[RMDB]
RNA sequence: GGGAACGACUCGAGUAGAGUCGAAAACACGAAAGUUGGCUAAUCCUGGUCGGACAUCAGGCGGUUAGUGCAUUGGCAUAAGCCAACUUGGCGCUAAUAGAUACUAAUCGUAGCAUAGCUGAAUAAACCCUCCUAUAGUGUUCGCACUAUAGGAGGGAAAAGAAACAACAACAACAAC
Reactivity to 2A3 in 0.01 (KOAc 150mM, MgCl2 10mM, bicine 150mM(pH8.5), 24C), signal-to-noise 5, nucleotides 027 to 126: c100a020c030g100a060a060a050g080u070u080g050g030c040u050a020a060u040c020c040u010g000g040u030c120g120g070a030c010a100u000c000a000g060g000c000g010g000u000u010a000g000u000g010c030a020u020u020g010g000c030a070u050a300a070g000c000c010a060a140c110u040u100g000g000c010g000c000u000a010a000u030a070g070a050u040a030c010u010a000a000u010c010g070u080a020g020c030a090u090a050g020c030u060g030a090a010u110a090a090a060
Reactivity to DMS in 0.01 (KOAc 150mM, MgCl2 10mM, bicine 150mM(pH8.5), 24C), signal-to-noise 4, nucleotides 027 to 126: c080a100c140g000a040a070a040g000u000u000g030g000c030u020a060a210u010c010c000u000g020g010u000c200g020g000a300c130a030u020c000a000g000g010c010g010g000u010u000a010g000u000g000c050a070u000u010g000g010c040a130u040a120a190g000c000c000a090a100c190u030u050g000g020c000g030c020u030a030a020u010a080g010a100u010a030c020u000a000a040u000c010g000u010a010g020c090a060u000a030g000c000u030g010a090a090u030a110a090a200